Background
The record gives the reactivity of an RNA of 207 nucleotides to 2A3. The RNA was probed in 150 mM KOAc, 10 mM MgCl2 and 150 mM bicine (pH 8.5) at 24 C. The data come from the RNA Mapping Database (RMDB), library OK3TST. For 2A3 the reverse transcriptase was SuperScript II with manganese.
RNA sequence: GGGAACGACUCGAGUAGAGUCGAAAACCCCGUGUGGAACACACGACUAAGCUUCGGCUUAGUAAGAGCAACUUACCAUGGUAGGCUCCCCGGCGUGUCUCGAACCAUGCCGGGCCAAACCCAUAGGGCUGGCGGUCCCUGUGCGGUCAUUAUGGAACCUAUAGUCCCACUUCGGUGGGACUAUAGGAAAAGAAACAACAACAACAAC
Reactivity to 2A3 in 0.01 (KOAc 150mM, MgCl2 10mM, bicine 150mM(pH8.5), 24C), signal-to-noise 1, nucleotides 027 to 156: c000c000c000c000g000u030g000u000g010g250a210a090c060a010c000a000c060g000a000c020u000a010a000g000c020u020u130c180g140g000c000u000u000a000g010u010a060a010g010a000g000c010a020a030c000u060u060a080c040c000a020u030g090g000u040a040g030g120c000u000c000c000c000c000g010g030c000g050u020g030u050c110u080c200g070a020a010c010c000a010u000g000c000c020g000g000g000c000c000a020a020a000c000c000c010a000u000a000g020g030g010c010u070g150g080c060g050g020u100c000c000c000u030g000u010g010c190g000g010u060c010a030u060u150a030u000g020g000a010a030